The record gives the reactivity of an RNA of 177 nucleotides to DMS and 2A3.
2A3 adducts were read by reverse transcription with SuperScript II with manganese.
It was measured as part of the RMDB library TTRDEL.
For DMS the reverse transcriptase was MarathonRT.
The 2A3 profile rests on 13,275 reads.
The RNA was probed in 150 mM KOAc, 10 mM MgCl2 and 150 mM bicine (pH 8.5) at 24 C.
RNA sequence: GGGAACGACUCGAGUAGAGUCGAAAAGAUAUGGAAUGACAAGUCUUCGAUAAGUAUCUCGGAAACGAGUAUACUUUUGACGAAGUCACCCAUUCCUAAGUCAAACUUUACCGUUCGCGGUAAAGAACUAUAAUGUGGUGUUCGCACCACAUUAUAGAAAAGAAACAACAACAACAAC
Reactivity to DMS in 0.01 (KOAc 150mM, MgCl2 10mM, bicine 150mM(pH8.5), 24C), signal-to-noise 6, nucleotides 027 to 126: g000a060u010a300u000g040g000a030a060u000g010a030c080a100a240g000u000c000u000u010c050g010a120u000a020a010g010u000a000u000c000u000c000g010g000a100a100a140c000g000a010g010u010a010u000a000c000u000u010u000u010g020a130c120g000a030a040g010u010c030a080c260c070c000a010u000u000c000c000u000a070a130g010u010c060a100a090a120c010u000u000u000a000c000c000g010u000u010c220g030c010g000g010u000a000a000a000g010a090a180
Reactivity to 2A3 in 0.01 (KOAc 150mM, MgCl2 10mM, bicine 150mM(pH8.5), 24C), signal-to-noise 5, nucleotides 027 to 126: g020a010u120a040u170g000g000a020a020u020g010a050c050a180a300g020u010c010u030u030c040g070a070u010a150a010g000u000a000u000c010u010c000g030g030a070a080a050c010g000a000g100u180a020u000a020c000u040u050u030u090g090a060c030g010a020a010g020u020c030a050c020c030c000a000u010u010c000c000u050a160a040g080u060c040a030a070a140c030u020u000u010a000c020c000g050u030u060c300g000c020g100g000u010a000a010a000g000a020a020